[RMDB]
RNA sequence: GGGAACGACUCGAGUAGAGUCGAAAAGAUAUGGACUGAACUACAGUGUAAACAAGGCGUUGAAACAGAUGCUUAUCGGAAACGAUAAGCAUCUGUGGAGCCUUGGAAGAAGCUGCAGUCCUAAGUCGUGUUCUUCUUAGUUCGCUAAGAAGAACACAAAAGAAACAACAACAACAAC
Reactivity to 2A3 in 0.01 (KOAc 150mM, MgCl2 10mM, bicine 150mM(pH8.5), 24C), signal-to-noise 1, nucleotides 027 to 126: g060a030u160a090u200g000g010a010c020u020g010a200a010c060u300a070c300a030g040u010g010u160a010a010a000c000a000a000g000g040c020g230u300u110g080a050a070a020c000a000g020a010u010g000c000u010u010a000u000c000g070g070a140a070a020c040g000a020u010a020a000g000c000a000u000c000u020g000u010g000g010a000g030c000c000u000u000g030g010a060a050g010a000a010g000c010u010g000c000a000g000u050c000c000u010a110a040g160u130c130
Reactivity to DMS in 0.01 (KOAc 150mM, MgCl2 10mM, bicine 150mM(pH8.5), 24C), signal-to-noise 3, nucleotides 027 to 126: g010a100u000a200u000g020g000a010c040u020g020a050a040c070u040a300c000a010g000u010g020u000a080a140a300c000a010a010g010g010c000g010u000u020g040a290a150a010c000a010g000a020u000g000c000u000u000a000u030c010g050g010a040a110a100c010g000a000u000a010a000g000c000a000u000c020u030g040u010g000g000a130g040c000c010u000u000g000g000a020a120g000a210a300g000c000u000g000c000a000g000u000c000c010u050a080a050g000u000c040